[RMDB]
RNA sequence: GGGAACGACUCGAGUAGAGUCGAAAAGCGCGAGGUUGCAGCGGGAAGUGCGGCUGGCAAAUGACGCUAACUGUCUGGCGGUUUCAGAAGCAGUAGAUGGCGCGGCAGCGGGAGCGCAGACGGUAUAUCGGGAUAUGACUUUCGAGUCAUAUCCCGAAAAAGAAACAACAACAACAAC
Reactivity to DMS in 0.01 (KOAc 150mM, MgCl2 10mM, bicine 150mM(pH8.5), 24C), signal-to-noise 1, nucleotides 027 to 126: g000c010g070c050g000a300g000g040u010u000g000c030a050g040c020g000g000g030a120a140g000u000g000c020g040g000c010u000g000g000c280a010a100a010u000g000a160c080g000c090u000a040a190c110u000g000u010c090u040g000g020c020g010g000u010u000u000c060a040g010a080a080g000c040a090g010u000a140g000a090u000g000g040c010g030c060g000g000c040a050g010c030g000g000g010a300g010c020g000c030a090g010a060c050g000g010u020a120u030a080